Overview
This 207-nucleotide RNA was probed chemically with 2A3. Conditions: 150 mM KOAc, 10 mM MgCl2 and 150 mM bicine (pH 8.5), 24 C. It was measured as part of the RMDB library M2RFPK.
RNA sequence: GGGAACGACUCGAGUAGAGUCGAAAAGAAAGAAAGAAAGUUCAUUGUUUAUCGGAAACUUGAAACUAUAACCAUUCAAACUUUUCCAGAAGUUAGUUUGAAUAGAAAUUAAAAAGAAACUUCUGAAUAACCUUAUCAUGCUUCGGCAUGAUAAGAAGUACUGAAGUUACUUCGGUAACUUCAGUACAAAAGAAACAACAACAACAAC
Reactivity to 2A3 in 0.01 (KOAc 150mM, MgCl2 10mM, bicine 150mM(pH8.5), 24C), signal-to-noise 2, nucleotides 027 to 156: g050a000a030a000g060a050a100a010g050a060a170a040g050u030u050c040a090u110u220g040u080u100u080a180u140c080g020g110a100a000a010c020u030u030g030a150a030a010c020u020a020u060a280a040c000c010a000u000u000c000a000a000a000c000u010u000u000u010c070c000a000g010a010a000g000u000u010a000g010u000u000u010g000a000a020u060a120g010a010a040a020u120u160a060a100a010a000a000g020a000a000a000c000u010u000c010u000g000a000a030u060a030a010c000c000u000u000a000u000c000a000u000g000c000u000u030c090g030g000c000a000u000g000a000u000a000a000g000a010a000